RNA sequence: GGGAACGACUCGAGUAGAGUCGAAAAGCGCAGUUAGAGUCCAUGCUAUUGGACCAACUGUGAGUUGGGCCUUGAUGACCCAUUUUUGGGACUGAGAGCAACCAGGCCUUGGCUGCCAUCAGAACAACAUACAUCAACCCUUCGGGGUUGAUGUAUGAAAAGAAACAACAACAACAAC
Reactivity to 2A3 in 0.01 (KOAc 150mM, MgCl2 10mM, bicine 150mM(pH8.5), 24C), signal-to-noise 2, nucleotides 027 to 126: g010c020g000c020a000g000u030u060a070g060a080g020u000c000c010a040u110g100c050u290a220u270u050g000g000a000c000c000a000a000c000u030g010u030g070a040g060u070u060g010g020g010c020c010u000u060g090a040u120g050a090c000c040c010a030u200u220u070u140u110g010g000g020a040c010u030g040a020g000a010g100c000a010a030c000c000a010g120g020c020c050u050u060g060g000c030u030g000c000c010a090u090c050a040g060a080a020c040a020a000
Reactivity to DMS in 0.01 (KOAc 150mM, MgCl2 10mM, bicine 150mM(pH8.5), 24C), signal-to-noise 3, nucleotides 027 to 126: g010c080g020c020a030g010u000u000a070g030a130g010u000c000c000a060u010g010c300u000a120u010u000g000g000a030c000c010a020a010c010u020g020u000g020a070g010u010u000g000g000g000c070c040u000u000g000a160u000g010a060c000c000c000a090u000u000u010u010u000g020g020g020a170c030u000g020a040g010a300g010c050a050a060c070c050a050g010g010c110c080u010u000g010g030c020u010g020c010c060a130u010c060a060g000a060a080c110a060a260